Chemical mapping of a 177-nucleotide RNA with 2A3. The data come from the RNA Mapping Database (RMDB), library M2PK90.
[RMDB]
RNA sequence: GGGAACGACUCGAGUAGAGUCGAAAAAUAAAGCAUCGGCAAGUUGGAAGCAGCAAACCUUCAUGCAAGCUGCAAGACGAUGCAUCCCAAGAAUCAGACAAACGACUCUACUCGAGUCGACAAAAAAUACAUUUAGGAAGUUCGCUUCCUAAAUGUAAAAAGAAACAACAACAACAAC
Reactivity to 2A3 in 0.01 (KOAc 150mM, MgCl2 10mM, bicine 150mM(pH8.5), 24C), signal-to-noise 1, nucleotides 027 to 126: a030u140a000a090a070g000c000a000u000c010g050g010c010a000a090g030u120u130g280g040a150a020g010c000a000g050c060a060a060a060c030c010u200u200c100a130u280g040c060a080a010g070c000u020g000c000a000a030g030a010c000g020a030u020g000c000a100u110c010c020c010a000a050g100a030a010u260c160a020g170a240c070a050a050a020c020g000a020c010u000c050u120a010c000u030c020g010a010g000u010c000g000a010c000a010a010a010a010a010a010
Conditions: 150 mM KOAc, 10 mM MgCl2 and 150 mM bicine (pH 8.5), 24 C.
Values cover nucleotides 27 to 126.